The record gives the reactivity of an RNA of 177 nucleotides to 2A3 and DMS. It was measured as part of the RMDB library TTRDEL. For DMS the reverse transcriptase was MarathonRT. 2A3 is a SHAPE reagent: it acylates the 2'-hydroxyl of flexible nucleotides of all four kinds. Conditions: 150 mM KOAc, 10 mM MgCl2 and 150 mM bicine (pH 8.5), 24 C.

[RMDB]
RNA sequence: GGGAACGACUCGAGUAGAGUCGAAAAGAUAUGGAGCCAGGGAGAUGCACCUCGGAAACGAGGUGGACAUCAUCGAUCUGGUCUCCUAAGUCAAAGGUUGGAUUCUGGUUCGCCAGAAUCCAACCAACACAUUCUACUAGUUCGCUAGUAGAAUGUGAAAAGAAACAACAACAACAAC
Reactivity to 2A3 in 0.01 (KOAc 150mM, MgCl2 10mM, bicine 150mM(pH8.5), 24C), signal-to-noise 6, nucleotides 027 to 126: g030a010u080a040u140g000g000a000g010c020c010a010g010g030g010a080g000a010u040g090c000a010c010c000u010c000g020g030a050a080a040c010g000a000g000g000u010g000g020a010c010a120u240c000a010u070c010g000a010u020c000u000g010g020u010c000u000c000c000u000a050a010g040u020c050a090a090a120g000g010u000u000g010g000a010u000u000c010u010g000g100u060u140c300g050c080c000a000g000a000a000u000c000c000a000a000c010c000a000a000
Reactivity to DMS in 0.01 (KOAc 150mM, MgCl2 10mM, bicine 150mM(pH8.5), 24C), signal-to-noise 9, nucleotides 027 to 126: g000a040u010a300u010g010g000a020g020c010c000a010g010g010g010a300g000a010u000g000c000a010c000c010u000c000g000g000a060a080a220c000g000a010g010g020u000g010g000a050c170a110u030c010a040u010c020g000a300u010c000u000g000g000u010c000u000c000c000u000a020a070g000u010c040a090a100a120g000g010u000u000g000g000a010u000u000c000u000g000g000u000u010c260g010c000c000a010g000a010a000u000c000c000a000a000c000c010a040a070